[RMDB]
Background
The record gives the reactivity of an RNA of 177 nucleotides to 2A3 and DMS. The reactions ran in a buffer of 150 mM KOAc, 10 mM MgCl2 and 150 mM bicine (pH 8.5), at 24 C. Reactivities are given for positions 27 through 126. DMS adducts were read by reverse transcription with MarathonRT. 2A3 is a SHAPE reagent: it acylates the 2'-hydroxyl of flexible nucleotides of all four kinds.
RNA sequence: GGGAACGACUCGAGUAGAGUCGAAAAAGAUGAAUGAAGAAAAGAAAGUUCCGGUGAUGUUGUAACGUUCAGGCGGUGAACAUAGUCUGGGAAAACGAGUUAAAGAAGCAAGGGACGUUUCGUAUUUACAAUAGUUAAUGUUCGCAUUAACUAUUGUAAAAGAAACAACAACAACAAC
Reactivity to 2A3 in 0.01 (KOAc 150mM, MgCl2 10mM, bicine 150mM(pH8.5), 24C), signal-to-noise 6, nucleotides 027 to 126: a000g120a060u170g040a090a060u130g050a060a080g080a070a070a010a020g120a050a080a010g030u050u020c020c030g020g030u050g030a060u040g020u040u040g040u090a070a060c030g010u060u040c060a030g070g080c020g050g030u100g020a020a000c010a020u050a020g040u040c040u030g020g000g000a020a090a000a010c050g010a020g050u060u130a080a050a060g050a070a010g000c060a020a030g000g000g020a010c050g010u000u000u000c030g020u050a260u020u010u000
Reactivity to DMS in 0.01 (KOAc 150mM, MgCl2 10mM, bicine 150mM(pH8.5), 24C), signal-to-noise 5, nucleotides 027 to 126: a060g020a060u010g000a060a080u020g020a060a090g000a090a080a080a100g000a070a090a130g000u010u000c020c020g020g020u060g010a070u000g010u000u000g010u000a060a110c090g000u000u010c100a050g000g010c040g010g030u000g010a020a040c090a050u010a060g010u010c020u010g000g010g010a060a060a050a070c070g010a090g000u010u000a050a060a080g000a040a070g010c050a030a050g020g010g010a090c110g000u000u000u000c020g000u020a110u000u000u000